Structure probing data (2A3 and DMS) for a 177-nucleotide construct. The RNA was probed in 150 mM KOAc, 10 mM MgCl2 and 150 mM bicine (pH 8.5) at 24 C. Source: RMDB library TTRDEL, as collected in RNAgym.

[RMDB]
RNA sequence: GGGAACGACUCGAGUAGAGUCGAAAAGAUAUGGAUGGCCACGGAGCAACAGCUCGGAAACGAGACAUGCUCCGUGGUCCAUCCUAAGUCAAACUCCCUUGAGAUUCUUCGGAAUCUCAAGGGAGAAGCCACAUAAGUAGUUCGCUACUUAUGUGGCAAAAGAAACAACAACAACAAC
Reactivity to 2A3 in 0.01 (KOAc 150mM, MgCl2 10mM, bicine 150mM(pH8.5), 24C), signal-to-noise 2, nucleotides 027 to 126: g010a010u060a040u180g010g000a000u010g010g000c010c000a010c000g010g010a000g010c020a020a170c060a160g060c010u020c020g000g000a080a080a040c020g000a010g020a040c020a030u050g000c000u020c000c000g000u000g000g000u000c010c000a000u000c000c000u000a000a000g010u000c000a020a010a030c000u000c000c000c000u000u010g000a000g010a000u020u000c030u090u150c300g150g010a010a000u000c010u000c000a000a000g010g010g000a000g000a010a000
Reactivity to DMS in 0.01 (KOAc 150mM, MgCl2 10mM, bicine 150mM(pH8.5), 24C), signal-to-noise 3, nucleotides 027 to 126: g000a030u000a300u010g000g020a000u000g010g000c010c010a010c000g000g010a010g030c000a030a050c260a190g000c000u000c000g020g010a120a070a170c010g000a020g000a020c120a170u000g000c000u010c000c000g030u000g000g000u010c010c000a010u010c000c000u000a010a080g000u000c020a130a100a160c020u000c000c000c000u000u000g000a010g000a020u000u000c000u000u010c180g030g010a030a000u000c000u010c000a000a000g000g000g000a000g010a000a040